[RMDB]
RNA sequence: GGGAACGACUCGAGUAGAGUCGAAAAGAUGCCACAUACGCGAUCAUCACUGAGAAGACCAACUCAAAGAAACGCGGCGAAAUUUUGGACAAAGCUAAUCGUGGCGAAAUUAAAUACAUCUUCCAGGUUAUGGCCCUAACUACUGGCGUUAACGUGCAGCUAUAUUAGCCUUCGGGCUAAUAUAGCUAAAAGAAACAACAACAACAAC
Reactivity to DMS in 0.01 (KOAc 150mM, MgCl2 10mM, bicine 150mM(pH8.5), 24C), signal-to-noise 2, nucleotides 027 to 156: g010a150u000g010c010c010a090c050a100u000a060c050g010c040g010a130u000c020a100u000c020a110c070u000g000a160g000a060a130g010a110c050c020a110a090c110u000c080a070a080a170g000a100a140a230c010g030c000g030g000c060g030a060a070a190u020u000u000u010g010g000a230c060a070a060a090g000c080u000a070a180u020c100g030u000g010g010c020g010a050a050a140u000u000a020a080a080u010a160c090a050u010c030u010u020c010c000a090g050g000u000u010a080u000g000g000c000c030c010u010a080a040c030u010a080c010u010g040g030c070g000u010u000a050a120c120g000u000g000c170
Reactivity to 2A3 in 0.01 (KOAc 150mM, MgCl2 10mM, bicine 150mM(pH8.5), 24C), signal-to-noise 1, nucleotides 027 to 156: g050a080u180g010c000c000a010c000a010u130a030c040g030c040g030a030u080c010a000u000c000a040c110u090g000a020g020a300a000g100a070c020c060a090a140c030u120c230a070a070a030g040a040a070a000c020g010c020g000g020c020g070a020a000a190u180u150u130u060g000g020a060c010a110a060a060g030c020u100a020a020u080c010g020u010g030g020c010g000a030a030a030u220u140a030a100a000u260a050c080a080u010c000u040u160c090c020a010g110g030u070u070a110u200g080g000c000c000c070u020a090a030c080u080a020c020u020g090g000c010g060u100u120a070a040c180g070u130g140c060